Structure probing data (DMS and 2A3) for a 177-nucleotide construct. Reactivities are given for positions 27 through 126. The RNA was probed in 150 mM KOAc, 10 mM MgCl2 and 150 mM bicine (pH 8.5) at 24 C.
[RMDB]
RNA sequence: GGGAACGACUCGAGUAGAGUCGAAAAGAAUGUGUGUGUCAAUACCACCCGCAGUUACGAUCAAACCUUCACCGGCUAAGGCUUCAGUAGCAGGACCCACGCAAAGAUUAUUUUUAACGCCAUCUUGGACACUAAGUCUGUUCGCAGACUUAGUGUCAAAAGAAACAACAACAACAAC
Reactivity to DMS in 0.01 (KOAc 150mM, MgCl2 10mM, bicine 150mM(pH8.5), 24C), signal-to-noise 1, nucleotides 027 to 126: g020a140a090u020g020u020g010u000g030u010g010u030c060a070a040u010a150c130c010a060c000c000c020g000c050a070g020u010u000a070c120g000a070u000c190a080a140a060c090c010u010u000c060a110c140c050g010g080c050u030a110a120g000g010c070u000u000c080a040g030u010a030g010c010a120g020g000a090c070c010c030a010c140g000c070a000a030a090g000a040u000u000a030u070u030u000u000u000a020a050c130g000c050c080a010u010c110u000u000g000
Reactivity to 2A3 in 0.01 (KOAc 150mM, MgCl2 10mM, bicine 150mM(pH8.5), 24C), signal-to-noise 1, nucleotides 027 to 126: g070a070a130u060g020u010g010u010g000u010g050u070c060a090a120u070a100c000c040a010c020c000c020g040c010a000g050u050u060a060c090g020a070u070c090a070a020a050c000c000u020u070c050a030c040c000g080g000c030u080a050a050g020g000c020u080u010c010a120g020u100a020g010c000a000g000g100a010c000c000c000a020c030g000c010a050a070a010g060a060u000u170a080u060u250u070u050u020a130a040c060g040c030c020a020u020c000u050u060g090